[RMDB]
RNA sequence: GGGAACGACUCGAGUAGAGUCGAAAAGGAAUUGGAAGGUCAUCCUUCACAGGAUCGUGUGGAAGUCCUGCUCGGGGCGGAAGCAUUAAAACCAUUCGAGCUAGUCAAUGCGUGGCAUGUCUCUCCGGUGUUUCUCUGGACUUCGGUCCAGAGAAAACCUGCGUGUAUGUUUCGACAUACACGCAGGAAAAGAAACAACAACAACAAC
Reactivity to 2A3 in 0.01 (KOAc 150mM, MgCl2 10mM, bicine 150mM(pH8.5), 24C), signal-to-noise 2, nucleotides 027 to 156: g040g000a030a070u080u070g030g030a080a000g040g010u150c050a090u140c040c030u060u090c050a040c100a070g060g010a030u060c060g020u010g020u040g070g020a010a000g000u040c000c020u040g100c100u070c110g000g000g000g000c060g000g010a000a000g000c030a020u050u130a040a030a010a020c000c010a030u040u070c040g000a000g020c070u080a020g120u090c040a090a090u100g030c050g030u030g060g020c020a010u060g060u000c020u000c000u010c110c030g010g010u000g040u030u030u000c010u000c000u000g000g000a000c000u070u000c190g080g000u000c000c000a000g000a000g000a000a000a000a000
An RNA of 207 nucleotides, treated with 2A3 and read out base by base. The 2A3 profile rests on 1,041 reads.